The record gives the reactivity of an RNA of 177 nucleotides to DMS and 2A3. DMS adducts were read by reverse transcription with MarathonRT. 2A3 adducts were read by reverse transcription with SuperScript II with manganese. Values cover nucleotides 27 to 126. The reactions ran in a buffer of 150 mM KOAc, 10 mM MgCl2 and 150 mM bicine (pH 8.5), at 24 C. For DMS, 1,577 sequencing reads were counted.
RNA sequence: GGGAACGACUCGAGUAGAGUCGAAAAAGACAGACUGGACGGAGGAUCAGAUCUGGCAGCGUCUCUUAACACUGACGUGUGCUGGCUGGUCAGUGCACCUGCAGUUUUGUUACGGACAUUGCGGAGAUAAUGCGGUCAUGUUCGCAUGACCGCAUUAAAAAGAAACAACAACAACAAC
Reactivity to DMS in 0.01 (KOAc 150mM, MgCl2 10mM, bicine 150mM(pH8.5), 24C), signal-to-noise 2, nucleotides 027 to 126: a100g000a040c030a020g000a050c020u000g010g010a040c080g010g010a250g010g000a020u010c000a030g000a140u000c010u010g010g010c000a140g010c010g030u000c000u000c070u000u010a110a070c300a090c200u010g000a020c110g010u000g030u000g020c010u000g010g020c040u000g000g000u000c010a040g020u010g010c160a080c010c040u010g000c010a030g000u010u000u020u000g010u000u000a120c210g010g000a080c090a060u000u000g010c000g020g000a140g000a130
Reactivity to 2A3 in 0.01 (KOAc 150mM, MgCl2 10mM, bicine 150mM(pH8.5), 24C), signal-to-noise 1, nucleotides 027 to 126: a000g030a000c020a000g000a020c000u010g010g040a010c080g080g030a070g080g010a030u030c000a020g080a180u060c000u000g030g010c010a000g000c000g000u010c060u000c000u100u150a110a010c030a020c090u040g000a000c000g030u140g080u040g040c000u000g020g050c020u010g000g040u090c000a000g040u000g000c000a060c050c020u060g090c030a050g030u010u080u120u080g020u010u030a070c080g050g000a040c040a080u080u060g000c030g000g080a050g010a020